Structure probing data (2A3 and DMS) for a 177-nucleotide construct. Values are in units of 0.01, from 0 to 300, in steps of 10.
[RMDB]
RNA sequence: GGGAACGACUCGAGUAGAGUCGAAAAGAAGGGAAAGGAGAUCCAUGGACAGUCUCCAGAGGUUCCUAAGGCCUCGAUCGCGCCUGCAGGGAGGCAGAAUGUCCCGGUUGUCCAUGAAAGAAGAAGAGAUGGGCUAUCAGUUCGCUGAUAGCCCAUCAAAAGAAACAACAACAACAAC
Reactivity to 2A3 in 0.01 (KOAc 150mM, MgCl2 10mM, bicine 150mM(pH8.5), 24C), signal-to-noise 2, nucleotides 027 to 126: g100a000a100g120g050g020a000a210a060g020g000a030g000a000u110c140c060a030u020g000g020a000c000a000g030u000c000u000c030c020a010g020a030g000g020u100u170c070c100u070a060a020g020g000c060c020u000c000g030a100u120c030g030c090g000c000c150u150g060c040a020g000g000g080a010g020g000c030a010g120a080a080u100g020u000c000c000c000g040g030u140u090g000u000c010c010a020u000g000a030a040a040g160a000a040g030a010a000g090a000
Reactivity to DMS in 0.01 (KOAc 150mM, MgCl2 10mM, bicine 150mM(pH8.5), 24C), signal-to-noise 2, nucleotides 027 to 126: g000a070a040g010g000g000a040a080a080g000g000a040g000a050u010c050c050a050u010g000g020a000c010a040g000u000c030u000c020c000a100g010a110g000g030u020u000c090c050u000a140a140g010g020c000c010u010c030g000a190u030c150g000c080g000c100c000u040g000c080a060g000g030g000a040g020g020c060a130g020a020a100u020g020u020c000c000c040g000g030u030u010g000u000c000c000a000u010g040a090a110a120g050a080a100g000a100a080g000a200
Reactivities are given for positions 27 through 126. The data come from the RNA Mapping Database (RMDB), library OK1LIB. For DMS, 3,001 sequencing reads were counted. For 2A3 the reverse transcriptase was SuperScript II with manganese.